[RMDB]
RNA sequence: GGGAACGACUCGAGUAGAGUCGAAAAUCCUGCAGGUUGAGCUCAGCCAAGUACCACCCCUCAGUAAGCCUAGAGUAGAGGGGCCUGACAUCCUUUCCUUAAAUUAAACAAGGAGCCUUAUCCAGGUAUACAGUUAAAUCUUCGGAUUUAACUGUAUAAAAGAAACAACAACAACAAC
Reactivity to DMS in 0.01 (KOAc 150mM, MgCl2 10mM, bicine 150mM(pH8.5), 24C), signal-to-noise 5, nucleotides 027 to 126: u000c000c000u000g020c110a090g010g010u010u000g010a100g030c080u010c040a090g010c030c040a080a120g010u020a060c090c030a200c050c010c020c020u000c020a120g000u010a080a120g010c050c020u000a080g000a120g020u020a100g010a050g000g000g020g020c060c040u000g000a130c110a060u000c020c030u010u000u010c000c030u000u020a050a050a090u040u040a080a150a140c130a050a050g010g000a030g000c040c020u000u020a060u010c090c030a060g010g010u020
Reactivity to 2A3 in 0.01 (KOAc 150mM, MgCl2 10mM, bicine 150mM(pH8.5), 24C), signal-to-noise 8, nucleotides 027 to 126: u010c000c000u020g020c060a050g030g020u070u080g040a030g020c030u020c070a020g010c030c010a050a020g030u040a070c000c010a050c000c010c000c000u020c020a060g060u110a090a040g020c030c040u090a050g020a030g090u130a030g020a030g010g010g010g000c000c000u010g000a000c000a060u050c010c000u040u050u090c000c000u090u070a100a200a140u180u190a120a120a040c060a050a030g030g000a020g020c010c010u050u080a080u080c030c020a000g000g030u010